An RNA of 177 nucleotides, treated with 2A3 and DMS and read out base by base. For DMS, 13,034 sequencing reads were counted.

RNA sequence: GGGAACGACUCGAGUAGAGUCGAAAAGAUAUGGACGGAUGUAUGAACUACGCUAUCACGUCGGAAACGACGUGUAAGGCGCAUACUGAUGUCCUAAGUCAAAGAUGGAUUCUUCGGAAUCCAUCAACUCUGAUAAGUAGUUCGCUACUUAUCAGAGAAAAGAAACAACAACAACAAC
Reactivity to 2A3 in 0.01 (KOAc 150mM, MgCl2 10mM, bicine 150mM(pH8.5), 24C), signal-to-noise 8, nucleotides 027 to 126: g020a020u080a040u160g010g000a010c010g020g000a020u030g010u020a010u020g030a110a120c140u160a070c300g000c010u020a030u190c010a000c000g000u000c010g010g010a060a070a010c010g000a000c010g020u010g000u020a080a070g050g000c020g000c020a000u000a000c010u020g020a020u060g000u000c000c000u000a020a000g000u010c040a100a050a100g000a010u000g010g000a000u000u010c020u040u090c300g100g000a000a000u000c010c000a000u000c000a000a000
Reactivity to DMS in 0.01 (KOAc 150mM, MgCl2 10mM, bicine 150mM(pH8.5), 24C), signal-to-noise 9, nucleotides 027 to 126: g000a050u000a300u010g000g020a010c000g000g010a130u010g010u010a010u010g000a120a080c170u010a300c030g010c010u000a290u000c000a010c000g020u000c010g010g000a090a080a200c000g010a000c000g010u000g000u010a040a150g010g010c010g000c010a010u000a000c000u010g000a300u020g000u000c000c000u000a030a060g010u010c020a100a070a130g000a000u000g000g000a020u000u000c000u000u010c210g010g000a030a000u000c000c000a000u000c010a040a070